[RMDB]
RNA sequence: GGGAACGACUCGAGUAGAGUCGAAAAGAUAUGGACACCUACAGGGAGCGUAGUGUCGGAAACGACACAACGCAUCGAUCUGUAAGGUGUCCUAAGUCAAACUUCGAAUUGUUCGCAAUUCGAAGAAGAUAGAAGCACGGUUCGCCGUGCUUCUAUCAAAAGAAACAACAACAACAAC
Reactivity to 2A3 in 0.01 (KOAc 150mM, MgCl2 10mM, bicine 150mM(pH8.5), 24C), signal-to-noise 2, nucleotides 027 to 126: g010a010u040a000u080g000g000a000c010a000c000c010u000a030c000a050g090g120g130a200g030c010g000u020a050g010u170g000u000c000g000g010a010a020a010c000g010a000c000a020c010a030a000c050g000c030a100u160c060g180a210u030c000u000g030u120a260a300g000g000u010g010u010c000c000u000a010a000g000u000c010a000a070a110c020u000u010c000g000a010a030u010u010g040u100u140c300g060c170a000a010u020u000c020g010a000a010g030a020a030
Reactivity to DMS in 0.01 (KOAc 150mM, MgCl2 10mM, bicine 150mM(pH8.5), 24C), signal-to-noise 2, nucleotides 027 to 126: g000a040u000a300u010g030g020a020c010a000c000c000u000a000c000a000g000g010g000a090g000c010g050u000a080g030u000g020u020c000g000g010a100a100a140c020g010a030c000a000c010a060a040c010g000c000a270u000c300g010a060u000c000u000g020u010a040a100g000g000u000g020u010c000c000u000a010a070g000u000c020a080a120a180c010u000u000c000g000a000a010u010u000g000u000u030c300g020c000a000a000u000u000c020g000a010a000g030a060a140

An RNA of 177 nucleotides, treated with 2A3 and DMS and read out base by base. DMS (dimethyl sulfate) methylates the pairing face of unpaired adenines and cytosines. For DMS the reverse transcriptase was MarathonRT. The data come from the RNA Mapping Database (RMDB), library TTRDES.